[RMDB]
RNA sequence: GGGAACGACUCGAGUAGAGUCGAAAAAUCGAAGUCACCGGCACCAUCGGCCGGGGCGGUCGCGAUCACACCAUCGAUACUCUGGAUGUGUACCCAUGAUCGAUCAGAAUUCACAGUUCUUCGCCAUCCUGACCAACAUCGGCGCGGCCAAGCAGGCCAUCACGUCAUAUUUCGAUAUGACGUGAUGAAAAGAAACAACAACAACAAC
Reactivity to DMS in 0.01 (KOAc 150mM, MgCl2 10mM, bicine 150mM(pH8.5), 24C), signal-to-noise 2, nucleotides 027 to 156: a060u000c090g000a120a110g000u000c020a090c010c010g020g020c000a180c090c150a100u000c060g010g000c000c020g010g000g000g000c050g030g030u000c000g040c020g030a110u000c040a080c020a190c040c010a080u020c000g020a100u000a060c070u000c050u010g030g020a060u000g020u000g040u000a140c060c020c010a090u010g000a020u000c050g020a060u020c060a060g000a060a020u000u000c080a060c090a100g010u000u000c070u000u000c040g050c070c020a070u000c010c010u000g020a060c030c020a030a080c030a100u010c040g030g000c060g040c010g030g010c010c030a070a070g030c110a140g030g010c090
Reactivity to 2A3 in 0.01 (KOAc 150mM, MgCl2 10mM, bicine 150mM(pH8.5), 24C), signal-to-noise 5, nucleotides 027 to 156: a000u120c030g040a050a000g010u040c040a050c300c000g000g000c020a080c130c090a180u170c120g070g000c000c020g000g000g010g000c000g000g000u030c020g000c020g030a070u070c050a050c040a020c140c030a040u040c020g030a050u060a170c050u070c040u120g020g020a070u010g100u040g030u170a080c040c010c010a050u120g060a100u050c050g000a020u090c070a040g060a060a060u220u130c060a040c030a150g010u020u020c020u030u060c030g010c000c020a030u020c000c000u040g030a120c070c050a090a070c070a120u080c040g050g010c000g000c030g020g000c000c010a040a000g020c040a040g020g060c020